[RMDB]
RNA sequence: GGGAACGACUCGAGUAGAGUCGAAAAAGGUCAAGCCGCUGCACCGCCUGAUCCUGAACCUGCCGAACGUUGACGAAGAGGCCGUAACGGCUUUCGCGAAAGGAGCGUUUAGCGAUGCACUCGAAAAGCAUGAAGUGUCAGAUCCGCCGGAGGCGUCGAUUUAGCAAUCAUUCGUGAUUGCUAAAUCAAAAGAAACAACAACAACAAC
Reactivity to DMS in 0.01 (KOAc 150mM, MgCl2 10mM, bicine 150mM(pH8.5), 24C), signal-to-noise 2, nucleotides 027 to 156: a060g000g000u000c060a050a140g020c110c050g040c040u010g030c030a140c010c080g000c020c030u000g020a090u000c050c010u010g000a110a040c040c010u000g080c020c000g010a040a050c050g030u010u010g010a180c050g000a080a080g020a130g010g010c010c000g000u010a080a150c110g020g010c010u000u000u000c040g060c040g020a070a140a120g000g010a140g020c010g010u010u000u000a080g010c000g000a050u010g000c010a040c080u000c040g010a120a090a060a110g010c050a080u020g010a070a080g010u000g000u000c020a140g020a070u000c000c040g030c050c010g010g010a160g020g020c030g010u000c090
Reactivity to 2A3 in 0.01 (KOAc 150mM, MgCl2 10mM, bicine 150mM(pH8.5), 24C), signal-to-noise 5, nucleotides 027 to 156: a000g070g010u070c040a050a030g010c020c010g020c060u040g010c030a060c070c020g020c010c010u050g000a040u080c030c030u030g010a010a020c010c020u060g050c030c020g040a060a050c030g030u070u100g090a070c020g030a080a080g120a120g300g010c010c010g050u170a140a090c160g000g000c000u040u080u040c050g000c020g070a100a040a060g060g040a030g030c020g000u020u020u070a020g000c010g000a020u070g010c010a030c060u070c050g100a080a040a040a050g040c020a010u090g060a140a010g030u040g020u110c010a000g020a070u020c020c010g020c030c040g040g010a020g030g000c010g020u050c040